[RMDB]
RNA sequence: GGGAACGACUCGAGUAGAGUCGAAAACACGCGGACAUGAAGGUCAAGACGGACAACACUGUGGACCAGACCGUUAACGUAAUCUACAGGUACAUGAGCAGCGAACCUGUUAUUUUCGGCGACCACGGAACUUUCCUCGAAUACAAACGAUACAGCAACACCUCGUAUGUUUCGACAUACGAGGUGUAAAAGAAACAACAACAACAAC
Reactivity to 2A3 in 0.01 (KOAc 150mM, MgCl2 10mM, bicine 150mM(pH8.5), 24C), signal-to-noise 3, nucleotides 027 to 156: c110a010c070g050c020g000g010a020c040a100u130g060a070a040g010g020u020c060a050a030g070a020c020g080g000a040c030a070a020c040a020c030u060g010u060g120g030a060c010c010a020g060a110c010c020g000u040u100a040a010c090g040u030a060a010u030c010u080a010c000a020g040g040u070a050c030a120u150g080a120g080c030a000g020c040g070a040a020c010c000u000g000u000u030a070u050u090u000u080c020g000g020c020g040a010c000c000a020c010g050g030a070a040c030u030u080u050c010c020u040c030g100a090a040u160a140c040a020a120a000c070g020a000u090a250c040a030g000c030a050
Reactivity to DMS in 0.01 (KOAc 150mM, MgCl2 10mM, bicine 150mM(pH8.5), 24C), signal-to-noise 1, nucleotides 027 to 156: c070a110c060g060c030g000g000a050c000a050u010g010a090a060g000g000u020c050a070a180g000a190c050g000g000a110c040a040a160c140a200c000u000g000u020g000g000a060c030c040a130g000a210c090c050g000u000u000a070a170c150g000u000a060a050u000c050u020a030c110a050g000g020u040a040c100a130u030g060a150g050c110a050g000c030g040a110a050c030c020u000g020u010u000a060u000u000u000u010c060g020g030c010g000a020c020c020a020c000g000g000a120a020c120u020u000u000c020c040u000c010g000a110a090u030a170c070a050a100a200c070g040a180u000a100c040a090g000c040a110